[RMDB]
RNA sequence: GGGAACGACUCGAGUAGAGUCGAAAACAGACCAAGUUCGCUUGGUCUGAAAGAAAGCGGAAAGCACCAGGGAGGGAAGGUGCGGGCCGCAACCACCCAUAAAAAGUACGAUCUUCGGAUCGUACAAGAUUGUGGUAGGGUUCGCCCUACCACAAUCAAAAGAAACAACAACAACAAC
Reactivity to DMS in 0.01 (KOAc 150mM, MgCl2 10mM, bicine 150mM(pH8.5), 24C), signal-to-noise 1, nucleotides 027 to 126: c000a000g010a020c010c000a000a000g010u000u010c200g070c010u010u010g010g010u000c000u000g030a020a020a100g020a010a070a160g000c030g000g000a060a060a180g010c010a000c000c090a190g000g030g010a070g000g000g010a220a070g010g000u000g010c010g020g020g010c010c010g010c020a040a010c120c060a200c020c010c000a180u040a080a080a050a090a070g000u000a000c000g000a020u000c000u010u040c170g010g000a000u000c000g000u000a000c000a070a090
Reactivity to 2A3 in 0.01 (KOAc 150mM, MgCl2 10mM, bicine 150mM(pH8.5), 24C), signal-to-noise 3, nucleotides 027 to 126: c000a000g000a010c000c000a000a000g010u020u070c120g000c140u000u010g010g000u000c000u010g000a010a010a010g070a010a060a010g020c000g000g010a050a040a000g010c000a000c010c010a060g030g110g070a130g010g080g020a030a100g000g000u030g000c000g010g030g010c000c000g010c010a010a000c010c010a020c020c000c000a030u230a050a140a010a010a010g000u010a000c000g000a000u010c010u040u060c180g070g000a000u000c000g030u010a000c000a000a000
Structure probing data (DMS and 2A3) for a 177-nucleotide construct.
The reactions ran in a buffer of 150 mM KOAc, 10 mM MgCl2 and 150 mM bicine (pH 8.5), at 24 C.
For 2A3 the reverse transcriptase was SuperScript II with manganese.
The DMS profile rests on 929 reads.
Values are in units of 0.01, from 0 to 300, in steps of 10.